[RMDB]
This 207-nucleotide RNA was probed chemically with DMS and 2A3.
For 2A3 the reverse transcriptase was SuperScript II with manganese.
The RNA was probed in 150 mM KOAc, 10 mM MgCl2 and 150 mM bicine (pH 8.5) at 24 C.
RNA sequence: GGGAACGACUCGAGUAGAGUCGAAAAGUUCAUCCCCUGAUCAAGGAUGCCCGAAACGGUGAGGCGGAAAGCAAGUUAAAUAACGUCAACCCAUCGGGACGGUUGGCCAGUUAAGAAGUGAGGAUUCAAAAGAUCGAACCGUUCGCGGUUCGAUCAAGAUGACUUUAAUCUUCGGAUUAAAGUCAUCAAAAGAAACAACAACAACAAC
Reactivity to DMS in 0.01 (KOAc 150mM, MgCl2 10mM, bicine 150mM(pH8.5), 24C), signal-to-noise 3, nucleotides 027 to 156: g020u010u020c040a080u000c010c000c000c010u010g010a160u000c040a120a100g000g000a090u000g000c100c020c000g000a070a150a110c130g040g030u000g000a130g020g020c020g000g000a080a080a150g020c060a120a090g010u000u000a050a080a070u000a090a090c060g020u000c030a070a030c010c000c030a240u000c050g010g000g000a110c120g000g000u010u010g010g010c020c010a080g010u000u000a050a080g010a050a140g000u000g010a100g000g010a140u010u010c070a050a070a110a150g000a030u000c000g000a030a020c020c010g000u000u000c260g020c040g000g010u010u000c000g020a000u000c000a000a090
Reactivity to 2A3 in 0.01 (KOAc 150mM, MgCl2 10mM, bicine 150mM(pH8.5), 24C), signal-to-noise 7, nucleotides 027 to 156: g040u060u050c020a040u050c000c000c000c010u050g030a080u040c020a020a020g050g000a040u090g040c000c010c020g050a070a070a040c090g030g000u050g020a100g030g000c040g020g030a120a020a010g070c110a090a020g030u120u190a140a100a110u150a110a020c010g010u010c010a010a010c000c010c010a030u040c020g000g010g030a010c020g010g030u010u010g010g000c020c030a040g010u040u100a100a060g040a070a010g050u060g060a030g060g040a060u090u070c060a050a070a050a040g000a000u000c000g000a000a000c000c000g000u050u060c180g010c010g080g000u000u000c000g000a000u000c000a000a000